[RMDB]
RNA sequence: GGGAACGACUCGAGUAGAGUCGAAAAGCUGAAAAUGAUUUAUGGGUAGUGGAAUAGGUUAACCGUAAGACCUUUGGUUGAAAAACUAUGAAAUUAAGCCUCAGAUAUUCUAUCUUUGGUUACGGGAAAAAUCAUUUACCGUUCGCGGUAAAUGAAAGGACUUAUACAACUUCGGUUGUAUAAGUCCAAAAGAAACAACAACAACAAC
Reactivity to 2A3 in 0.01 (KOAc 150mM, MgCl2 10mM, bicine 150mM(pH8.5), 24C), signal-to-noise 2, nucleotides 027 to 156: g030c040u030g010a060a070a030a020u060g050a120u060u070u270a070u150g040g020g000u030a050g020u040g040g050a150a140u040a180g000g020u010u060a050a060c000c000g000u010a040a000g050a060c010c000u000u060u060g000g000u000u030g020a040a030a030a020a020c040u060a110u220g040a060a060a040u080u100a080a100g020c000c010u000c020a000g030a050u030a100u240u120c110u040a070u020c000u000u030u010g030g000u020u010a010c030g000g000g030a000a180a000a000a000u020c000a000u000u000u000a000c000c010g030u000u030c270g000c000g110g000u010a000a000a000u000g000a020a000a000
This 207-nucleotide RNA was probed chemically with 2A3. Values cover nucleotides 27 to 156. For 2A3 the reverse transcriptase was SuperScript II with manganese. High 2A3 reactivity points to a flexible backbone, as in loops and unpaired stretches. The 2A3 profile rests on 1,151 reads.